Chemical mapping of a 177-nucleotide RNA with 2A3 and DMS.
It was measured as part of the RMDB library M2PK90.

RNA sequence: GGGAACGACUCGAGUAGAGUCGAAAAUUAAAGACAGCCGCAAAUGGGUAAAACCCACCAUACUGGAGGAAGGAGAAGGGAGAGUCAUCCUCAGCGGACCAGCAGCAAUAACAGCUGCAAGCAAAAAGGAUAAGUCAAUGUUCGCAUUGACUUAUCCAAAAGAAACAACAACAACAAC
Reactivity to 2A3 in 0.01 (KOAc 150mM, MgCl2 10mM, bicine 150mM(pH8.5), 24C), signal-to-noise 1, nucleotides 027 to 126: u010u010a050a050a000g070a040c000a030g030c000c060g000c030a010a110a090u130g010g010g020u100a060a050a030a090c000c010c010a030c020c010a080u040a130c060u100g010g000a000g010g010a050a020g080g030a040g000a070a050g050g010g010a080g030a010g040u020c010a020u000c010c020u040c000a020g000c040g040g030a030c000c020a040g020c010a000g000c000a030a110u090a200a020c030a050g020c030u020g000c000a010a000g020c020a000a070a090a010a020
Reactivity to DMS in 0.01 (KOAc 150mM, MgCl2 10mM, bicine 150mM(pH8.5), 24C), signal-to-noise 1, nucleotides 027 to 126: u050u000a050a080a140g010a130c110a050g030c020c210g000c000a070a070a070u010g040g000g020u000a070a010a050a300c050c000c000a030c100c080a050u040a160c200u000g030g000a040g000g000a030a080g010g000a090g000a030a030g010g000g000a100g000a050g010u030c040a030u000c010c010u050c040a030g000c110g000g000a050c050c040a050g040c050a010g000c010a080a050u000a120a130c240a160g000c000u000g010c010a090a130g000c210a010a040a070a040a020
Annotation: The RNA was probed in 150 mM KOAc, 10 mM MgCl2 and 150 mM bicine (pH 8.5) at 24 C. For DMS the reverse transcriptase was MarathonRT.